RNA sequence: GGGAACGACUCGAGUAGAGUCGAAAACAGCCUCCUCGCUGGCGCCGGCUGGGCAACGAUCCGAGGGGACUGUCCCUCUCGAGAAUCGGCAAAUGGGGCCCCUCGCUCGUAUCUCCGAGAGGAGACGUACCGCACGAGUUCGCUCGUGCGAAAAGAAACAACAACAACAAC
Reactivity to DMS in 0.01 (KOAc 150mM, MgCl2 10mM, bicine 150mM(pH8.5), 24C), signal-to-noise 5, nucleotides 027 to 129: c100a110g010c050c010u010c000c030u000c080g000c080u010g000g000c140g040c000c030g020g040c080u050g000g020g120c080a060a070c070g000a030u010c130c020g010a000g000g050g050g000a000c080u030g050u050c030c000c010u000c010u010c020g020a110g030a040a090u000c030g020g020c080a040a070a080u060g000g010g000g010c010c030c010c020u000c030g010c190u000c020g010u060a130u030c050u000c000c000g020a080g020a180g010g030a040g010a110c090g000u030a050c130
Reactivity to 2A3 in 0.01 (KOAc 150mM, MgCl2 10mM, bicine 150mM(pH8.5), 24C), signal-to-noise 6, nucleotides 027 to 129: c030a000g010c000c000u010c000c000u010c040g000c040u060g000g000c090g010c030c020g030g050c050u120g020g000g020c050a040a020c030g050a040u000c030c000g000a010g000g010g010g030a020c070u090g060u120c030c010c000u030c000u000c010g190a210g050a100a110u070c010g020g020c020a050a040a070u140g020g000g010g000c000c000c000c000u000c030g030c010u070c020g040u100a110u020c030u000c030c030g030a030g010a020g090g000a010g010a020c030g030u050a090c010